This 207-nucleotide RNA was probed chemically with 2A3.

RNA sequence: GGGAACGACUCGAGUAGAGUCGAAAACGUCUAUCUAGGUACCCAACCGAGCGAAGCCGAAUAAAAUUACCCAUGUAGCCCUAGAUCAUUAAGGGAUCAAGCCUCGAAGCCUCGAGGGCCACUCGAUGAUCGCCGAGGUAGGCCCGUCUACCUGGGUGCCUUACCACAAUUUCGAUUGUGGUAAGGCAAAAGAAACAACAACAACAAC
Reactivity to 2A3 in 0.01 (KOAc 150mM, MgCl2 10mM, bicine 150mM(pH8.5), 24C), signal-to-noise 1, nucleotides 027 to 156: c020g030u030c010u040a150u040c080u060a070g040g000u050a060c010c010c010a020a020c010c030g030a020g000c030g150a120a020g040c040c030g060a060a050u100a140a120a050a030u180u100a130c000c000c000a010u060g000u060a000g040c000c000c000u030a040g010a000u030c010a080u170u240a080a030g000g010g020a020u100c090a130a020g040c000c000u030c020g010a040a000g020c020c020u010c010g030a030g000g050g000c020c010a080c020u050c050g070a100u070g030a070u120c010g000c000c040g020a020g020g040u050a030g040g000c000c070c010g050u000c000u000a000c000c000u060g000g000g060u080

2A3 adducts were read by reverse transcription with SuperScript II with manganese.
For 2A3, 509 sequencing reads were counted.
The RNA was probed in 150 mM KOAc, 10 mM MgCl2 and 150 mM bicine (pH 8.5) at 24 C.
Source: RMDB library OK3TST, as collected in RNAgym.